[RMDB]
RNA sequence: GGGAACGACUCGAGUAGAGUCGAAAACGGUGAUAGAUCGGUCUAGACAGGCAUGCAGGCUCCCUCCCGGCUGAAGGACUGGAGGGGGGGGAGGCGCGGAGAUGGCAGCAGACUCUGUGAGCUGCGAGUGAGCGAGCUAGCCUCCGGGCCCAGCGAGGACACCUAUUACAUUCGUGUAAUAGGUGUCAAAAGAAACAACAACAACAAC
Reactivity to 2A3 in 0.01 (KOAc 150mM, MgCl2 10mM, bicine 150mM(pH8.5), 24C), signal-to-noise 1, nucleotides 027 to 156: c080g040g020u040g000a070u120a130g030a040u030c040g010g060u020c040u010a030g060a120c080a050g000g090c050a040u010g000c000a050g130g000c020u020c020c000c000u010c000c000c000g040g070c040u070g060a130a040g090g060a070c010u030g050g000a040g010g010g010g000g000g000g010g040a010g000g060c060g000c020g080g000a040g000a020u160g020g000c000a040g010c000a020g020a210c010u000c060u110g150u080g060a020g040c040u040g000c030g000a020g060u100g030a040g020c010g000a000g000c020u020a000g000c000c000u040c020c020g010g000g000c000c000c010a040g000c010g010a040g060